[RMDB]
Source: RMDB library TTRDES, as collected in RNAgym. Chemical mapping of a 177-nucleotide RNA with 2A3 and DMS. The reactions ran in a buffer of 150 mM KOAc, 10 mM MgCl2 and 150 mM bicine (pH 8.5), at 24 C. DMS adducts were read by reverse transcription with MarathonRT. Values cover nucleotides 27 to 126.
RNA sequence: GGGAACGACUCGAGUAGAGUCGAAAAGAUAUGGACUUCUCGAUGAGUACACGUAGUUGUCAGCCACUAUUCUCGGAAACGAGAAUAUGCUGACAGGUUCGAAGUGUACGAGAGAAGUCCUAAGUCAGUUUAUAGUAAACUUCGGUUUACUAUAAACAAAAGAAACAACAACAACAAC
Reactivity to 2A3 in 0.01 (KOAc 150mM, MgCl2 10mM, bicine 150mM(pH8.5), 24C), signal-to-noise 9, nucleotides 027 to 126: g030a020u110a080u180g010g000a000c000u020u000c000u010c010g260a300u290g120a050g040u010a000c000a000c010g060u070a070g260u040u020g000u010c000a010g010c000c010a140c050u000a000u010u010c000u000c000g030g050a130a080a060c000g010a010g010a000a000u040a050u130g000c000u000g000a000c000a000g000g020u160u180c060g080a250a100g010u010g000u010a000c000g000a010g000a000g000a000a000g010u000c000c000u000a010a000g020u000c030a010
Reactivity to DMS in 0.01 (KOAc 150mM, MgCl2 10mM, bicine 150mM(pH8.5), 24C), signal-to-noise 9, nucleotides 027 to 126: g010a050u000a300u010g000g000a020c000u000u000c000u000c000g000a210u010g000a300g010u000a000c000a010c010g000u000a200g000u010u000g010u000c000a010g000c000c030a050c030u000a010u000u000c000u000c000g010g000a110a110a200c000g010a010g010a010a000u000a000u010g000c000u000g010a000c000a010g000g010u000u010c070g000a130a300g010u000g000u000a000c000g000a100g010a010g000a010a010g000u000c000c000u000a010a060g010u000c050a110